An RNA of 207 nucleotides, treated with 2A3 and DMS and read out base by base. DMS (dimethyl sulfate) methylates the pairing face of unpaired adenines and cytosines. It was measured as part of the RMDB library RNAMAK.

RNA sequence: GGGAACGACUCGAGUAGAGUCGAAAAAGGCCUUCGGGCCUCCAGGUGCGUACUACAGAUGGCGAGCGACGAUCGUGGAGAACUACCAGGGUCCCAAAUAGGACCCUGGCUCCACGGGAGCUCCCAUCUGUAUCGCGAUCGCUCAGUUCGCUGAGAACUCACUAGUAUCAUUCGUGAUACUAGUGAGAAAAGAAACAACAACAACAAC
Reactivity to 2A3 in 0.01 (KOAc 150mM, MgCl2 10mM, bicine 150mM(pH8.5), 24C), signal-to-noise 4, nucleotides 027 to 156: a000g000g000c020c010u040u070c180g110g010g020c010c000u000c000c000a080g000g080u100g040c000g020u090a100c080u020a000c050a010g000a010u000g030g030c240g050a020g000c000g240a300c010g020a030u040c000g000u000g050g030a010g020a130a120c160u190a070c240c010a000g010g010g000u020c010c060c050a140a290a080u260a060g000g000a010c010c000c010u000g000g000c000u000c000c000a000c000g000g000g000a000g000c000u000c000c010c000a000u010c000u000g000u000a000u020c000g000c000g050a080u100c090g020c020u000c000a030g030u100u170c150g000c140u050g010a000g020a100a080
Reactivity to DMS in 0.01 (KOAc 150mM, MgCl2 10mM, bicine 150mM(pH8.5), 24C), signal-to-noise 2, nucleotides 027 to 156: a020g020g020c000c000u000u000c230g070g050g000c010c000u000c000c040a160g040g030u000g040c010g020u000a080c100u000a040c050a020g010a070u010g010g020c200g020a040g020c000g000a110c150g030a120u000c000g020u030g010g010a160g000a100a170c060u000a230c010c010a030g020g000g010u020c000c000c010a010a120a210u010a040g000g000a040c010c000c010u000g000g000c000u010c000c010a020c000g010g000g000a140g010c000u000c010c030c010a010u000c000u000g010u000a000u010c050g010c020g000a090u010c070g030c020u020c000a100g020u000u000c120g050c040u000g000a140g000a120a290